[RMDB]
Structure probing data (DMS) for a 177-nucleotide construct. Source: RMDB library OK2TRN, as collected in RNAgym. For DMS the reverse transcriptase was MarathonRT.
RNA sequence: GGGAACGACUCGAGUAGAGUCGAAAAGGACUGCUGGAGCGCUUAGAAGUGAGAAUGCCGGUAUGAGUAGCGAAAGACAGGUGAGAAUCCUGUCCACCGAAUGACUAAGGUUUCCUGGGGAAGGCUCCAUGGGAAUUCGGUUCGCCGAAUUCCCAUGAAAAGAAACAACAACAACAAC
Reactivity to DMS in 0.01 (KOAc 150mM, MgCl2 10mM, bicine 150mM(pH8.5), 24C), signal-to-noise 2, nucleotides 027 to 126: g050g020a080c090u010g000c050u000g030g050a050g050c060g010c010u010u000a060g010a150a090g020u000g010a110g010a070a060u000g000c040c010g000g040u010a030u000g000a060g020u010a040g020c060g040a090a090a130g010a000c030a010g010g000u000g040a170g000a300a180u010c000c000u000g000u010c010c100a060c150c030g010a070a060u010g000a130c060u000a050a070g030g000u000u000u000c000c060u010g090g030g000g020a110a060g000g000c100u010c090